Overview
Chemical mapping of a 177-nucleotide RNA with DMS and 2A3. 2A3 adducts were read by reverse transcription with SuperScript II with manganese.
RNA sequence: GGGAACGACUCGAGUAGAGUCGAAAAGCGCGUAGGUUCAGAUGAUGGGCCCGCAUCUGUACGAAAGAAAGACGAAAGUCCAGCCUACGUGCAUGAGCACGCGGGCCCCGUGCUCUACAGCAAAAGACACCGAUAUCCUAUUCGUAGGAUAUCGGUGAAAAGAAACAACAACAACAAC
Reactivity to DMS in 0.01 (KOAc 150mM, MgCl2 10mM, bicine 150mM(pH8.5), 24C), signal-to-noise 3, nucleotides 027 to 126: g000c000g000c010g000u010a000g000g010u000u000c040a000g020a010u030g010a040u040g000g010g010c020c000c050g000c000a000u000c030u000g030u010a130c190g010a090a050a080g010a090a120a080g000a010c010g000a120a130a160g000u010c000c150a020g000c010c000u000a010c000g000u010g000c000a030u000g010a170g020c000a000c040g010c150g010g000g010c000c020c000c010g000u000g000c010u010c010u020a130c090a210g000c220a050a120a140a120g000a250
Reactivity to 2A3 in 0.01 (KOAc 150mM, MgCl2 10mM, bicine 150mM(pH8.5), 24C), signal-to-noise 7, nucleotides 027 to 126: g010c010g000c000g010u010a000g020g020u060u110c050a020g000a050u040g010a020u060g030g000g000c000c000c000g020c000a000u000c000u030g180u160a080c200g150a090a080a130g090a050a100a010g030a020c020g050a140a030a010g010u010c020c030a010g000c000c000u000a000c000g000u000g000c000a010u070g000a000g000c000a000c010g010c050g000g000g030c000c010c000c010g000u000g000c000u000c000u030a080c050a080g080c060a040a110a010a010g090a020
Source: RMDB library OK1LIB, as collected in RNAgym.